Conditions: 150 mM KOAc, 10 mM MgCl2 and 150 mM bicine (pH 8.5), 24 C. An RNA of 177 nucleotides, treated with 2A3 and DMS and read out base by base. 2A3 adducts were read by reverse transcription with SuperScript II with manganese.
[RMDB]
RNA sequence: GGGAACGACUCGAGUAGAGUCGAAAAGAAAAGAAAGAAAAGGCUACAGCGACCGGUGAAAGAACAACGAAAAGAAACGCUGAGGAUGCCAUCACCGAAAAGAAAAAGAAAAAGAAAAGAAAAGAAAAUUAGUAUACUAGUUCGCUAGUAUACUAAUAAAAGAAACAACAACAACAAC
Reactivity to 2A3 in 0.01 (KOAc 150mM, MgCl2 10mM, bicine 150mM(pH8.5), 24C), signal-to-noise 1, nucleotides 027 to 126: g000a050a140a040a020g040a060a090a000g020a030a120a010a000g000g010c000u010a010c020a070g000c020g040a200c060c010g010g010u040g030a080a080a110g150a060a030c060a020a020c050g130a100a170a050a110g040a000a090a000c010g070c020u000g020a030g050g050a050u100g020c040c020a060u030c000a050c040c010g000a020a030a030a030g060a010a040a000a050a000g040a000a090a120a000a000g070a000a030a000a000g080a020a090a000a020g010a000a000a030
Reactivity to DMS in 0.01 (KOAc 150mM, MgCl2 10mM, bicine 150mM(pH8.5), 24C), signal-to-noise 1, nucleotides 027 to 126: g050a160a130a130a100g030a080a020a100g020a080a080a180a100g000g000c020u000a180c020a020g000c060g050a090c070c010g000g010u000g010a050a110a090g020a090a050c100a000a120c110g030a130a070a150a170g040a150a050a070c070g030c000u000g000a080g000g000a050u000g000c010c050a050u000c070a030c080c010g010a100a090a040a050g010a030a070a020a080a190g000a030a060a040a020a050g000a070a020a060a080g000a000a070a020a190g040a080a050a050